[RMDB]
RNA sequence: GGGAACGACUCGAGUAGAGUCGAAAAGGCGACCUGCGCACCUUCAGGGUGGACAGGAUCCGUCGGGUGCGCCAGCAGGGCUUCACCCGGUUCGAGCCCCCUCGCGGCAUCGACCUCACCGCGCGCCCGAGCGGCGCGAAUUCGUUCGCGCCGCUCGAAAAGAAACAACAACAACAAC
Reactivity to DMS in 0.01 (KOAc 150mM, MgCl2 10mM, bicine 150mM(pH8.5), 24C), signal-to-noise 2, nucleotides 027 to 126: g010g000c040g010a090c010c000u020g000c120g020c030a020c000c010u000u000c300a140g020g000g020u020g000g000a020c030a030g020g010a070u010c070c050g020u000c030g010g000g020u000g000c300g010c020c050a010g030c100a140g000g000g020c040u010u010c090a100c010c030c030g000g000u000u000c050g010a100g000c000c010c010c050c060u000c060g010c080g010g000c050a050u000c030g000a070c010c010u020c060a070c040c090g000c040g010c120g010c030c040